[RMDB]
RNA sequence: GGGAACGACUCGAGUAGAGUCGAAAAUAUGUCUCCGGCGGGAAAUUACAUAGUAUACCAGGUACUAAAUACUGUUGGCAAGGCCAGAAAGGAGGAUUAGAAGGCCUACGACAAAAGGGGUGGUCAGCAUUGCCUAUUCCUUCGGGAAUAGGCAAUGAAAAGAAACAACAACAACAAC
Reactivity to DMS in 0.01 (KOAc 150mM, MgCl2 10mM, bicine 150mM(pH8.5), 24C), signal-to-noise 1, nucleotides 027 to 126: u000a030u010g030u000c050u000c000c030g020g040c080g010g010g010a050a080a040u010u000a090c100a120u010a030g020u000a020u010a110c090c040a020g020g010u000a040c040u000a070a040a160u030a080c100u000g000u000u010g010g010c060a070a070g010g000c030c000a030g010a040a080a070g000g010a060g030g020a100u000u000a100g010a210a080g010g000c030c020u000a080c140g000a080c110a020a020a080a060g030g010g030g020u010g020g000u000c010a100g000
This 177-nucleotide RNA was probed chemically with DMS. The reactions ran in a buffer of 150 mM KOAc, 10 mM MgCl2 and 150 mM bicine (pH 8.5), at 24 C. The DMS profile rests on 750 reads. Reactivities are given for positions 27 through 126.